Record summary:
Chemical mapping of a 177-nucleotide RNA with 2A3 and DMS. The 2A3 profile rests on 1,006 reads. Reactivities are given for positions 27 through 126. For DMS the reverse transcriptase was MarathonRT. Conditions: 150 mM KOAc, 10 mM MgCl2 and 150 mM bicine (pH 8.5), 24 C. The data come from the RNA Mapping Database (RMDB), library OK2TST.
[RMDB]
RNA sequence: GGGAACGACUCGAGUAGAGUCGAAAACUAGCAGUGGUGAUGCCACAACUGCUUAUGCUAACAGUGUUUUUAACAUAAUCCAGGCUACGUCUGCCAAUGUUGCACGUUUGGUUAGUACCAUUACACGACGGGUGAAGUUGUUCGCAACUUCACCCGUAAAAGAAACAACAACAACAAC
Reactivity to 2A3 in 0.01 (KOAc 150mM, MgCl2 10mM, bicine 150mM(pH8.5), 24C), signal-to-noise 2, nucleotides 027 to 126: c020u010a010g000c000a010g000u030g060g070u010g100a200u230g300c240c020a040c020a040a030c010u010g000c000u010u050a080u140g040c010u020a020a030c050a130g010u000g090u030u040u050u090u110a030a010c000a030u110a060a020u110c140c040a010g060g000c030u090a060c080g100u020c050u000g000c030c020a030a000u080g010u060u030g010c010a030c040g150u130u070u030g100g000u020u000a010g010u010a050c030c020a010u100u050a070c130a010c060g100
Reactivity to DMS in 0.01 (KOAc 150mM, MgCl2 10mM, bicine 150mM(pH8.5), 24C), signal-to-noise 1, nucleotides 027 to 126: c110u000a030g040c060a050g030u000g010g030u010g030a180u000g050c200c030a090c030a060a060c010u000g000c050u000u010a080u030g010c060u010a030a030c120a120g010u000g000u000u020u060u020u010a040a020c090a030u010a050a110u000c230c040a050g000g030c050u010a080c130g000u020c020u000g020c080c040a080a040u000g000u000u000g000c050a010c020g050u020u010u020g010g000u000u010a070g020u000a070c060c030a060u010u000a110c080a120c290g010